[RMDB]
RNA sequence: GGGAACGACUCGAGUAGAGUCGAAAAACGGGGCAGCGCGUGACGGGCGUGAUAGAGUUGAUCCAUAUCCAGCUGCCGUCGGCGGACUUUGCGAUAUGCAUCGGAGGCAAGAGAGGCUUCUCGUGAGUGGCGAUCUUGAGCACUUUGGCGAUUUUCCUACAUAUCCCACUUUCGAGUGGGAUAUGUAAAAAGAAACAACAACAACAAC
Reactivity to DMS in 0.01 (KOAc 150mM, MgCl2 10mM, bicine 150mM(pH8.5), 24C), signal-to-noise 2, nucleotides 027 to 156: a060c030g050g030g030g070c030a100g030c040g040c070g010u000g010a040c060g050g000g040c040g050u010g000a090u000a100g010a140g030u000u010g000a140u000c060c030a060u000a080u010c030c030a150g020c010u000g010c000c050g030u010c030g030g030c040g000g010a050c030u000u010u020g000c070g000a110u010a080u000g000c080a090u010c020g020g010a120g010g050c050a050a080g010a110g010a130g020g000c050u000u000c010u020c040g000u000g000a050g000u000g020g040c050g030a100u000c060u000u000g030a140g030c020a100c030u000u000u010g040g010c050g000a200u000u000u000u000c010c040
Reactivity to 2A3 in 0.01 (KOAc 150mM, MgCl2 10mM, bicine 150mM(pH8.5), 24C), signal-to-noise 3, nucleotides 027 to 156: a000c060g010g010g000g010c030a040g040c040g000c020g100u070g000a040c040g020g040g020c030g010u060g030a070u050a060g120a020g050u060u130g050a070u000c020c010a010u020a050u050c010c020a040g010c010u030g050c050c020g110u040c040g010g020c000g050g000a100c060u100u110u160g010c030g060a070u040a010u180g010c020a020u010c020g020g000a010g010g050c040a110a020g040a000g010a020g110g030c000u040u000c040u010c040g040u070g050a090g000u040g040g010c000g020a050u020c060u040u070g030a020g020c060a030c120u000u030u070g000g010c020g050a040u040u120u030u150c130c000

An RNA of 207 nucleotides, treated with DMS and 2A3 and read out base by base. The reactions ran in a buffer of 150 mM KOAc, 10 mM MgCl2 and 150 mM bicine (pH 8.5), at 24 C. Values cover nucleotides 27 to 156. For DMS the reverse transcriptase was MarathonRT.